[RMDB]
RNA sequence: GGGAACGACUCGAGUAGAGUCGAAAACGCUGUAUAUGGCGAUCGGCAAUGCAAUGCUGACCGCGACAGUUCUGACGGCUGUGCCCCUGGCGCUGGCGGGAGGCGUGUUCGCACUACUGCUGCGCGGCAUCCCGUUCUCCAUCUCCGCAGCAGUGGGCUACCUCUGGUAGUUCGCUACCAGAGGUAGAAAAGAAACAACAACAACAAC
Reactivity to 2A3 in 0.01 (KOAc 150mM, MgCl2 10mM, bicine 150mM(pH8.5), 24C), signal-to-noise 4, nucleotides 027 to 156: c050g020c020u040g060u070a060u030a080u300g190g010c000g010a050u010c000g010g000c000a030a110u190g060c020a070a170u060g010c050u010g000a020c000c000g000c020g060a040c030a060g020u090u120c100u160g060a060c060g020g000c030u090g080u100g110c000c010c010c020u060g060g030c010g000c020u030g030g010c020g030g000g000a010g000g020c030g010u040g060u040u110c060g000c060a070c070u050a020c000u040g010c000u020g000c020g040c020g030g020c020a090u010c000c000c020g000u130u050c080u070c110c040a260u100c050u010c060c000g000c000a020g000c000a000g010u020g010g010g000
Reactivity to DMS in 0.01 (KOAc 150mM, MgCl2 10mM, bicine 150mM(pH8.5), 24C), signal-to-noise 2, nucleotides 027 to 156: c050g000c020u000g010u000a080u000a110u000g010g040c010g030a020u010c010g010g000c010a050a080u000g050c300a200a200u000g000c010u010g000a030c000c000g050c000g000a100c040a040g020u000u000c070u000g020a300c060g000g010c010u000g030u000g010c000c010c010c020u000g020g000c040g010c070u000g030g020c000g020g010g000a050g000g000c020g010u000g020u000u010c070g000c090a120c020u000a050c040u020g010c030u000g000c000g000c000g000g000c100a120u000c030c020c020g000u000u010c040u000c050c050a130u000c020u000c030c000g000c020a050g010c000a020g000u000g010g000g000

This 207-nucleotide RNA was probed chemically with 2A3 and DMS. Source: RMDB library OK3TST, as collected in RNAgym. The reactions ran in a buffer of 150 mM KOAc, 10 mM MgCl2 and 150 mM bicine (pH 8.5), at 24 C. For 2A3 the reverse transcriptase was SuperScript II with manganese.